[RMDB]
RNA sequence: GGGAACGACUCGAGUAGAGUCGAAAAUUGCGUAAACGCAGAUUGAGUUACGUUAGCUACGGGGCUAUUAUAAGUGAAUUGAAACGUUAUCGUUAUUGUUUGCCCUAAUAUCCCGAUUCUAGGAUAAAGGGCAAGUGUAGUUCGCUACACUUGCCCUAAAAGAAACAACAACAACAAC
Reactivity to DMS in 0.01 (KOAc 150mM, MgCl2 10mM, bicine 150mM(pH8.5), 24C), signal-to-noise 2, nucleotides 027 to 126: u000u000g000c020g030u010a080a070a040c070g020c120a150g020a150u030u030g000a110g030u000u010a000c080g000u000u000a030g010c140u000a090c200g030g010g000g010c140u000a050u000u000a070u000a050a090g000u000g000a070a070u010u000g020a090a090a070c060g010u000u000a080u000c040g000u000u000a070u020u000g020u000u000u000g000c000c000c030u000a020a070u000a030u000c000c000c020g010a190u020u000c120u000a060g000g000a110u000a020a080